[RMDB]
RNA sequence: GGGAACGACUCGAGUAGAGUCGAAAAGGAGACAGCGCUCCUGUAGUCAUCAAGGUGCUCCUCCGCAGUAUUGAGAGACACGUCGAUGUCUUCUUCUCGAAGAUGAUGCUCUUCUAUCAGAAAAUCUUUCAGAAUCGGCAAUAAUUCGCUCUCCAUCACAUAAUCUAGCCUUCGGGCUAGAUUAUGUAAAAGAAACAACAACAACAAC
Reactivity to 2A3 in 0.01 (KOAc 150mM, MgCl2 10mM, bicine 150mM(pH8.5), 24C), signal-to-noise 5, nucleotides 027 to 156: g020g000a010g000a010c050a040g030c010g010c050u090c030c020u030g050u050a120g070u080c040a070u030c030a160a030g040g000u010g020c020u020c020c010u060c030c040g020c010a030g040u120a080u090u130g010a050g000a000g000a010c030a010c090g070u060c020g040a050u050g080u030c000u050u030c010u080u020c030u040c070g020a040a010g000a030u120g010a040u100g050c020u020c020u130u040c040u080a150u120c030a000g100a030a060a050a040u070c050u020u200u130c070a040g020a130a030u040c020g010g000c040a020a030u130a160a110u170u090c050g000c020u030c000u020c020c020a040u110c100
Reactivity to DMS in 0.01 (KOAc 150mM, MgCl2 10mM, bicine 150mM(pH8.5), 24C), signal-to-noise 2, nucleotides 027 to 156: g010g000a070g020a180c050a140g020c020g040c040u020c010c030u010g040u000a010g010u010c060a100u010c030a040a150g040g000u000g030c030u000c030c010u010c020c090g000c080a220g000u010a090u000u000g000a140g010a100g020a030c220a060c060g000u000c050g000a060u010g000u000c010u000u000c020u010u000c030u000c020g010a040a080g000a090u000g010a150u000g010c070u000c030u000u000c010u020a180u000c060a090g000a070a080a130a100u010c040u000u010u000c070a250g010a070a090u000c030g020g000c060a080a090u000a110a210u000u000c030g000c030u010c020u000c010c060a200u000c130